This 177-nucleotide RNA was probed chemically with DMS and 2A3.
For 2A3 the reverse transcriptase was SuperScript II with manganese.
Values cover nucleotides 27 to 126.
RNA sequence: GGGAACGACUCGAGUAGAGUCGAAAAGAUAUGGACCUUGUAGCUAGCCUACGUGAUUCGGAAACGAAUCAGGCUUGGACCUAUUGGGUCCUAAGUCAAAACCCAGAUAGCUUCGGCUAUCUGGGAACCUACUCAACUAGUUCGCUAGUUGAGUAGGAAAAGAAACAACAACAACAAC
Reactivity to DMS in 0.01 (KOAc 150mM, MgCl2 10mM, bicine 150mM(pH8.5), 24C), signal-to-noise 6, nucleotides 027 to 126: g000a030u010a300u010g000g000a030c010c010u000u000g000u000a010g010c060u000a080g010c010c010u010a100c170g020u010g000a000u000u010c010g010g000a100a090a160c010g000a010a010u000c000a030g000g000c030u000u010g020g020a100c300c010u000a030u000u000g000g000g010u000c000c000u000a010a060g010u000c020a070a080a110a160c000c000c000a000g000a000u000a000g010c000u000u010c210g030g000c000u000a000u000c000u000g000g010g010a010a010
Reactivity to 2A3 in 0.01 (KOAc 150mM, MgCl2 10mM, bicine 150mM(pH8.5), 24C), signal-to-noise 8, nucleotides 027 to 126: g040a010u070a030u140g000g000a000c010c000u010u040g010u000a020g030c070u030a020g010c010c020u090a130c190g300u180g010a010u000u010c000g020g030a050a050a060c000g000a000a000u000c020a010g040g000c020u060u150g100g100a060c010c010u010a030u020u060g020g000g000u000c000c010u020a090a010g020u010c030a020a040a080a240c000c010c010a010g000a000u000a000g000c070u100u040c300g100g000c000u000a000u000c000u000g000g000g000a000a000

For 2A3, 29,594 sequencing reads were counted. For DMS, 9,544 sequencing reads were counted.